[RMDB]
About this RNA
Source: RMDB library M2RFPK, as collected in RNAgym. Chemical mapping of a 207-nucleotide RNA with DMS and 2A3. The RNA was probed in 150 mM KOAc, 10 mM MgCl2 and 150 mM bicine (pH 8.5) at 24 C. In probing experiments dimethyl sulfate is read out at A N1 and C N3, which are open when not base-paired. DMS adducts were read by reverse transcription with MarathonRT.
RNA sequence: GGGAACGACUCGAGUAGAGUCGAAAAUUGCGCCUCAGAUUCGCCGUCGGCAUUUCCCCAGCAGCCAUGACCUACCAGGCUGCGGUGCGGCUCGCCGCACAGGUCAUCCCUCAUCGGGCGCGUCCUGGAUAGGGCUAUACUUUCGAGUAUAGCCCAAACCAUUGCAUGGAUUCGUCCAUGCAAUGGUAAAAGAAACAACAACAACAAC
Reactivity to DMS in 0.01 (KOAc 150mM, MgCl2 10mM, bicine 150mM(pH8.5), 24C), signal-to-noise 1, nucleotides 027 to 156: u020u010g000c000g020c020c020u000c080a160g000a190u010u000c080g040c000c010g020u000c030g010g090c050a200u000u010u000c020c000c030c060a150g030c040a020g060c020c010a100u020g020a130c060c040u020a160c120c070a190g020g030c060u000g000c020g010g000u000g010c040g030g040c130u000c190g020c020c000g000c010a030c030a010g000g000u000c050a170u000c020c020c050u010c070a070u000c080g020g000g000c000g020c020g000u000c010c020u000g000g010a160u020a120g010g030g040c000u010a000u010a010c000u000u000u000c210g000a050g000u000a010u000a000g000c010c010c000a000a000
Reactivity to 2A3 in 0.01 (KOAc 150mM, MgCl2 10mM, bicine 150mM(pH8.5), 24C), signal-to-noise 1, nucleotides 027 to 156: u100u140g020c040g000c030c000u130c020a050g000a230u040u070c050g020c020c000g000u050c050g070g000c010a080u050u060u060c000c000c010c000a010g000c000a000g010c000c020a160u130g000a060c030c020u170a250c120c000a020g000g030c000u000g000c030g010g030u010g000c000g000g020c060u100c260g090c000c000g000c000a000c000a010g000g090u060c010a110u000c080c030c080u150c000a110u100c030g000g030g000c010g020c120g030u030c000c010u000g040g000a120u160a130g000g000g000c000u000a000u000a000c020u000u100u190c200g040a000g000u000a000u010a000g000c030c000c020a000a000